RNA sequence: GGGAACGACUCGAGUAGAGUCGAAAACUAUCGAGGGGCUGCGUCUCGUGCCAGAAAAAUCCGCGCACCAAAAAUAACGUUUGGGUUUUGGCGGAAAAUAGACGGGAGAUUAGCCGCAUUACUCUCUGGGCGACUUAUCGAUCCUUGUCGAAGGCAAAGGUGAAUGAAAGUUCGCUUUCAUUCACCUAAAAGAAACAACAACAACAAC
Reactivity to 2A3 in 0.01 (KOAc 150mM, MgCl2 10mM, bicine 150mM(pH8.5), 24C), signal-to-noise 3, nucleotides 027 to 156: c030u060a050u220c030g020a050g000g000g040g070c090u090g000c050g090u020c020u020c060g050u050g030c000c000a040g130a050a080a020a000a010u000c000c010g020c020g020c020a100c010c020a020a030a030a040a050u230a090a080c120g010u030u020u010g080g030g010u050u060u180u250g140g000c030g020g000a040a030a010a000u050a000g000a010c000g000g020g000a060g000a010u020u040a010g010c000c000g020c020a040u060u240a110c050u080c030u010c080u130g030g060g020c010g020a030c000u010u030a020u060c040g060a050u030c020c010u050u280g030u020c020g030a030a010g010g000c000a050a070
Reactivity to DMS in 0.01 (KOAc 150mM, MgCl2 10mM, bicine 150mM(pH8.5), 24C), signal-to-noise 2, nucleotides 027 to 156: c070u000a080u010c040g010a120g040g050g020g050c070u020g020c070g020u000c040u000c040g030u000g010c030c020a190g020a020a080a060a090a120u000c000c000g030c020g060c090a050c020c000a010a030a090a230a170u010a100a150c280g030u010u000u010g000g020g000u010u010u000u010g070g010c030g030g000a010a030a040a190u000a070g010a060c020g020g000g000a120g000a070u010u000a030g010c010c000g000c010a060u010u010a100c060u020c090u000c080u000g000g000g000c000g020a020c020u020u000a080u010c030g000a150u000c020c010u000u030g040u000c000g020a110a140g000g010c050a080a160